[RMDB]
RNA sequence: GGGAACGACUCGAGUAGAGUCGAAAACUUGAUUUUUGUACAUUUGUAGAAAAAUCAUGUACAUCAUAUGUAGAUACCGCUAAGUCACUUUUUCUGAAUUUGGAUUGUUAAAAUGUAAACAUCGUGAAGGCAGGAACCGUAAUUGUCCAGCUCCUCAACAUGCCUAAAGUUUCGACUUUAGGCAUGUAAAAGAAACAACAACAACAAC
Reactivity to 2A3 in 0.01 (KOAc 150mM, MgCl2 10mM, bicine 150mM(pH8.5), 24C), signal-to-noise 2, nucleotides 027 to 156: c000u000u020g000a000u050u000u030u020u020g160u070a020c040a200u120u140u300g060u090a030g130a000a020a000a000a000u040c010a010u060g070u040a040c000a070u100c030a030u080a110u200g050u040a060g040a110u040a090c030c000g000c040u040a060a020g050u090c020a030c100u030u110u010u070u040c060u010g120a190a160u010u050u100g050g060a070u030u020g030u040u030a120a080a100a090u110g010u070a050a040a030c010a020u090c020g080u030g090a010a030g040g020c030a000g010g000a020a000c010c000g050u040a010a080u090u050g020u000c010c010a010g010c000u000c020c000u000c000a000
Reactivity to DMS in 0.01 (KOAc 150mM, MgCl2 10mM, bicine 150mM(pH8.5), 24C), signal-to-noise 2, nucleotides 027 to 156: c010u010u020g030a020u000u000u000u000u000g000u020a010c010a300u000u000u000g020u000a070g000a000a000a030a030a040u010c040a030u000g010u000a080c070a130u000c080a140u020a140u010g020u010a070g010a120u000a100c030c010g000c060u000a050a090g020u000c020a110c050u000u000u020u000u000c030u010g020a070a070u000u000u000g020g000a060u000u000g010u000u000a020a040a090a060u000g000u000a060a050a060c010a090u000c050g010u000g010a090a060g030g030c040a060g000g010a060a090c040c010g030u000a050a190u000u000g020u020c010c060a230g010c020u000c020c000u010c040a240
Record summary: This 207-nucleotide RNA was probed chemically with 2A3 and DMS. It was measured as part of the RMDB library OK3TST. Conditions: 150 mM KOAc, 10 mM MgCl2 and 150 mM bicine (pH 8.5), 24 C.